Conditions: 150 mM KOAc, 10 mM MgCl2 and 150 mM bicine (pH 8.5), 24 C.
This 177-nucleotide RNA was probed chemically with 2A3 and DMS.
Values cover nucleotides 27 to 126.
2A3 adducts were read by reverse transcription with SuperScript II with manganese.

[RMDB]
RNA sequence: GGGAACGACUCGAGUAGAGUCGAAAACAACGCGGUCCUGACCGAGAUGCUCCGGCGCCUGGACGAAUCGGGCAAAAAGCAGGAUGCCUGGCUCGACAACCUCGACAAGAUUGGAGAGGGCAACUGGUCAGUGCCUAUACUUCGGUAUAGGCACUGAAAAAGAAACAACAACAACAAC
Reactivity to 2A3 in 0.01 (KOAc 150mM, MgCl2 10mM, bicine 150mM(pH8.5), 24C), signal-to-noise 1, nucleotides 027 to 126: c000a000a000c030g000c030g070g040u000c020c050u090g070a180c030c000g030a070g030a080u150g010c090u040c030c030g080g000c040g020c020c020u080g030g000a070c030g060a020a050u130c020g000g030g000c000a130a030a000a000a030g060c040a020g000g050a040u010g010c000c010u030g020g030c000u020c010g030a040c030a100a150c010c000u020c040g000a000c060a090a140g060a300u160u240g020g000a040g030a030g000g030g000c030a060a070c080u030g040g060
Reactivity to DMS in 0.01 (KOAc 150mM, MgCl2 10mM, bicine 150mM(pH8.5), 24C), signal-to-noise 2, nucleotides 027 to 126: c070a130a140c140g000c020g000g050u000c030c080u010g010a150c020c020g010a110g010a120u000g020c060u000c020c010g020g000c180g000c030c040u000g000g000a080c080g020a070a060u000c030g030g010g000c030a040a060a060a140a090g000c080a040g050g000a120u010g000c020c000u000g040g010c070u020c030g000a090c130a110a080c020c000u000c070g050a210c110a030a120g000a180u000u000g010g010a220g020a250g000g000g000c070a070a120c050u000g000g010